Source information
This 177-nucleotide RNA was probed chemically with 2A3 and DMS. For 2A3, 1,606 sequencing reads were counted.

[RMDB]
RNA sequence: GGGAACGACUCGAGUAGAGUCGAAAAGCUAGGCAUUUCGAUGCCUAGCGAGCGCAGAGUCUAUGCAUCUCUGAAUCACACAACAGCCGUGACUAUGCGUGGGAGUAUCCCUCUUCGGAGGGAUAAAAGUCGUUGUGAAUUUCGAUUCACAACGACUAAAAGAAACAACAACAACAAC
Reactivity to 2A3 in 0.01 (KOAc 150mM, MgCl2 10mM, bicine 150mM(pH8.5), 24C), signal-to-noise 1, nucleotides 027 to 126: g000c000u000a010g000g000c000a000u080u040u050c290g130a010u020g000c000c000u000a010g000c000g010a000g000c030g010c000a020g000a000g030u010c020u060a050u180g000c030a170u060c050u030c010u150g170a100a090u180c050a040c020a020c030a290a000c050a060g000c000c000g020u000g000a000c000u010a000u030g000c000g010u050g030g080g000a060g010u030a020u010c000c030c090u010c000u030u070c160g120g000a000g000g020g000a000u020a000a020a000
Reactivity to DMS in 0.01 (KOAc 150mM, MgCl2 10mM, bicine 150mM(pH8.5), 24C), signal-to-noise 2, nucleotides 027 to 126: g000c000u010a000g010g000c000a020u000u000u020c170g000a050u000g020c000c000u000a010g000c000g000a100g030c030g000c000a020g000a020g000u010c020u000a130u040g010c060a150u020c100u000c070u000g000a130a090u000c110a070c110a060c100a070a120c130a120g000c070c070g010u010g000a020c020u010a060u000g000c020g030u020g000g010g010a110g000u000a010u000c000c000c000u000c000u000u030c130g040g000a020g000g000g000a000u000a000a010a070
2A3 adducts were read by reverse transcription with SuperScript II with manganese.
The RNA was probed in 150 mM KOAc, 10 mM MgCl2 and 150 mM bicine (pH 8.5) at 24 C.
DMS adducts were read by reverse transcription with MarathonRT.